[RMDB]
RNA sequence: GGGAACGACUCGAGUAGAGUCGAAAAAGUUUUGUAAGCAGACCUAAGGAACGGGCUGAAGAAUGUUGUGGAGACCCAGGUACUUCGACUUAGCAUUCUGAGUUCAGAGUUCGCCCAGGAGUUCCAGAUAUUGGGGGUGAUUCGUCACCCCCAAUAUAAAAGAAACAACAACAACAAC
Reactivity to DMS in 0.01 (KOAc 150mM, MgCl2 10mM, bicine 150mM(pH8.5), 24C), signal-to-noise 2, nucleotides 027 to 126: a070g000u000u000u000u000g000u020a110a120g010c110a040g000a040c020c010u010a050a020g010g000a020a040c010g000g000g010c010u000g000a150a020g000a020a030u010g010u010u000g030u010g010g000a070g000a070c030c090c150a170g020g000u020a060c030u000u010c030g020a060c100u010u020a040g020c020a040u010u000c010u010g000a090g020u000u000c040a110g020a300g010u000u000c010g010c010c010c010a160g010g000a190g000u000u000c010c030a120g010

Chemical mapping of a 177-nucleotide RNA with DMS. The reactions ran in a buffer of 150 mM KOAc, 10 mM MgCl2 and 150 mM bicine (pH 8.5), at 24 C. The data come from the RNA Mapping Database (RMDB), library OK2TST. For DMS, 1,340 sequencing reads were counted.